[RMDB]
Notes: Chemical mapping of a 177-nucleotide RNA with 2A3 and DMS. The reactions ran in a buffer of 150 mM KOAc, 10 mM MgCl2 and 150 mM bicine (pH 8.5), at 24 C. For 2A3 the reverse transcriptase was SuperScript II with manganese.
RNA sequence: GGGAACGACUCGAGUAGAGUCGAAAAAAAGUCUAUAGUAAGUGGUAUGCUAAAGCAUAACUUGCCAAUUGAAGAAUUUAUGUUUUGCACAGAUGAUAAGCACUUAGAUGAUAUAGAAAAACAAGGUAAUGAUACUAGUAUUCGUACUAGUAUCAUUAAAAGAAACAACAACAACAAC
Reactivity to 2A3 in 0.01 (KOAc 150mM, MgCl2 10mM, bicine 150mM(pH8.5), 24C), signal-to-noise 9, nucleotides 027 to 126: a000a010a000g090u010c020u010a030u060a020g070u020a030a010g000u010g090g080u170a060u090g020c090u200a060a000a000g000c010a000u010a010a020c020u040u100g140c060c050a250a260u120u300g080a130a080g030a080a070u020u030u030a020u030g020u000u000u010u020g030c040a060c060a100g140a080u160g040a070u230a180a070g060c010a000c010u020u010a040g050a180u160g160a020u060a010u020a060g070a020a090a020a010a010c100a100a020g120g030u060
Reactivity to DMS in 0.01 (KOAc 150mM, MgCl2 10mM, bicine 150mM(pH8.5), 24C), signal-to-noise 6, nucleotides 027 to 126: a060a030a090g000u000c000u010a010u000a030g010u010a010a010g010u000g010g020u000a110u000g010c020u030a030a030a020g010c010a010u000a010a010c130u000u010g030c090c120a080a100u030u040g010a110a130g020a050a040u000u000u000a010u000g000u000u000u000u000g000c010a030c210a070g000a090u060g010a110u030a070a100g010c010a010c000u000u000a030g010a130u020g000a110u010a020u000a010g000a020a040a020a050a090c180a080a060g000g010u010